Source information: The record gives the reactivity of an RNA of 177 nucleotides to 2A3 and DMS. For 2A3, 6,449 sequencing reads were counted. Conditions: 150 mM KOAc, 10 mM MgCl2 and 150 mM bicine (pH 8.5), 24 C. Reactivities are given for positions 27 through 126.
RNA sequence: GGGAACGACUCGAGUAGAGUCGAAAAGAUAUGGAGACGGGACGCGAUAAGCUGCCAUCGGAAACGAUGGGCAGCUUUUGACGCGUCCAGUCUCCUAAGUCAAAACAUAUUGGUUCGCCAAUAUGAACUGUCAUCUUAAGUUCGCUUAAGAUGACAGAAAAGAAACAACAACAACAAC
Reactivity to 2A3 in 0.01 (KOAc 150mM, MgCl2 10mM, bicine 150mM(pH8.5), 24C), signal-to-noise 2, nucleotides 027 to 126: g010a000u030a020u060g010g000a010g000a000c040g010g000g020a010c000g010c000g080a130u050a300a010g000c010u020g000c000c000a000u010c000g010g000a050a000a010c010g000a010u020g050g050g030c010a000g000c010u000u010u010u030g000a000c030g010c000g000u020c000c000a000g000u000c010u000c000c000u010a000a010g010u000c030a000a020a050a110c000a000u020a020u020u010g050g050u060u090c300g080c090c000a000a000u010a010u020g050a030a060
Reactivity to DMS in 0.01 (KOAc 150mM, MgCl2 10mM, bicine 150mM(pH8.5), 24C), signal-to-noise 3, nucleotides 027 to 126: g000a020u000a140u010g000g000a010g000a010c010g000g010g010a010c000g020c000g020a110u010a020a010g000c000u000g000c000c000a010u000c000g010g000a030a020a060c000g010a010u000g020g010g020c000a000g010c000u000u000u010u010g020a170c070g020c000g010u000c000c000a010g000u000c000u010c000c000u000a000a040g000u000c020a100a070a120a250c010a020u000a010u000u000g000g000u000u010c270g010c020c000a030a000u000a000u000g000a070a200